Chemical mapping of a 207-nucleotide RNA with DMS and 2A3.
High DMS reactivity at an A or C suggests that its Watson-Crick edge is free.
[RMDB]
RNA sequence: GGGAACGACUCGAGUAGAGUCGAAAACGUCGUGUUCGCACGACGAAAAAAACCUUUGUGCGAGACAUGCUUCUGUGAUGGAUGCCCCAUUGGGGAACUACAUCUGCAUGGAGCAACAGCUCGCACUCUGGUAAAAAGUGUAAGUUCGCUUACACAACGUAACUUGCUUAUUCGUAAGCAAGUUACGAAAAGAAACAACAACAACAAC
Reactivity to DMS in 0.01 (KOAc 150mM, MgCl2 10mM, bicine 150mM(pH8.5), 24C), signal-to-noise 2, nucleotides 027 to 156: c000g050u000c010g080u010g040u000u010c300g060c000a020c010g020a010c010g000a010a000a090a090a050a040a030c010c000u010u000u010g030u010g010c010g020a040g000a050c080a300u020g010c010u000u010c010u000g040u000g000a080u000g000g000a130u010g010c000c000c000c000a300u000u020g020g020g000g000a030a010c010u000a100c020a000u000c010u010g050c010a050u000g030g000a050g000c010a030a050c060a100g010c010u000c010g000c010a000c000u000c030u010g010g010u010a020a030a100a130a090g010u000g010u000a010a060g040u000u000c300g030c020u000u000a020c010a020c010a100a160
Reactivity to 2A3 in 0.01 (KOAc 150mM, MgCl2 10mM, bicine 150mM(pH8.5), 24C), signal-to-noise 7, nucleotides 027 to 156: c010g020u000c010g020u010g050u080u090c250g030c090a000c010g000a010c030g070a040a000a000a000a000a000a000c010c000u020u020u000g000u000g000c010g010a010g050a090c070a150u060g010c020u090u070c010u020g060u020g060a290u070g050g030a020u100g030c000c000c010c030a220u180u300g000g000g000g000a020a020c060u110a030c070a010u000c010u030g000c010a030u150g010g000a000g000c000a030a010c030a040g020c000u000c000g000c000a000c000u000c000u020g000g030u090a080a080a050a050a030g000u000g000u010a010a010g000u050u180c220g000c130u000u000a010c010a000c010a030a020

Overview:
The RNA was probed in 150 mM KOAc, 10 mM MgCl2 and 150 mM bicine (pH 8.5) at 24 C. The data come from the RNA Mapping Database (RMDB), library RNAMAK.